[RMDB]
RNA sequence: GGGAACGACUCGAGUAGAGUCGAAAAUUACUCAUGGUCACAAGCGGGAGCAAUGGCUCGACACGGUUUAGCUGGUUAUUGGUGGGCAGCCGUUGCAGAAGAAGACUGGCCGAGUGACUUAGACAGACACGGGUACUAUAUUCGUAUAGUACCCGUGAAAAGAAACAACAACAACAAC
Reactivity to 2A3 in 0.01 (KOAc 150mM, MgCl2 10mM, bicine 150mM(pH8.5), 24C), signal-to-noise 2, nucleotides 027 to 126: u040u010a020c010u030c000a080u170g000g010u020c000a020c010a080a070g060c050g000g000g050a070g030c000a030a000u030g010g000c000u020c030g110a120c000a000c010g000g030u010u070u090a040g060c040u080g100g040u090u100a090u060u110g290g010u020g000g070g000c050a000g010c000c000g020u000u010g000c010a010g040a050a000g050a100a020g050a040c040u040g100g000c000c020g020a010g000u020g010a010c000u000u040a040g010a140c080a010g070a050
Reactivity to DMS in 0.01 (KOAc 150mM, MgCl2 10mM, bicine 150mM(pH8.5), 24C), signal-to-noise 4, nucleotides 027 to 126: u010u000a060c010u000c030a120u010g030g000u010c010a030c050a280a210g020c020g010g010g000a200g010c020a030a020u010g010g000c000u000c030g030a100c020a020c030g010g000u010u000u000a090g010c060u000g010g000u000u000a040u000u000g020g060u000g000g020g010c200a030g010c000c010g010u000u000g010c030a110g000a270a130g000a090a070g010a130c210u000g000g000c000c010g020a080g020u000g000a030c060u000u010a080g010a100c150a060g000a260
The record gives the reactivity of an RNA of 177 nucleotides to 2A3 and DMS. 2A3 adducts were read by reverse transcription with SuperScript II with manganese. The DMS profile rests on 3,936 reads. For 2A3, 1,698 sequencing reads were counted.